[RMDB]
Conditions: 150 mM KOAc, 10 mM MgCl2 and 150 mM bicine (pH 8.5), 24 C. An RNA of 177 nucleotides, treated with DMS and 2A3 and read out base by base.

RNA sequence: GGGAACGACUCGAGUAGAGUCGAAAAUACGAGAGGAACCGUUCAUUCACGUAAUUGGUAUUUACAUCUGUUUGAUAAGACAAUGUUGUGAAGCUACCACGUGUUGGAUUAUGGCUGAACGCCUCUACGUCGUAAUAAGCUUCGGCUUAUUACGACGAAAAGAAACAACAACAACAAC
Reactivity to DMS in 0.01 (KOAc 150mM, MgCl2 10mM, bicine 150mM(pH8.5), 24C), signal-to-noise 3, nucleotides 027 to 126: u010a100c170g010a040g010a020g000g000a130a090c160c050g010u000u000c020a050u000u020c030a030c020g000u010a100a150u000u010g000g010u000a070u000u000u000a010c010a010u000c020u000g010u000u000u000g010a200u020a140a090g000a010c030a020a110u000g010u000u010g010u010g000a010a020g040c060u010a060c130c080a050c080g020u020g030u020u000g000g010a030u010u020a120u000g010g000c300u000g010a090a070c160g000c040c010u010c010u010a130
Reactivity to 2A3 in 0.01 (KOAc 150mM, MgCl2 10mM, bicine 150mM(pH8.5), 24C), signal-to-noise 2, nucleotides 027 to 126: u180a040c060g030a010g000a010g010g080a030a070c080c000g010u020u000c010a040u080u030c040a010c040g010u070a130a070u100u080g060g040u070a230u060u070u000a000c020a020u010c050u050g080u050u040u060g300a260u200a130a010g000a000c020a030a170u130g010u050u000g050u020g050a030a010g030c060u030a020c020c030a020c000g080u060g020u040u040g030g000a060u090u030a060u270g060g000c040u030g060a080a000c030g020c000c020u020c000u010a110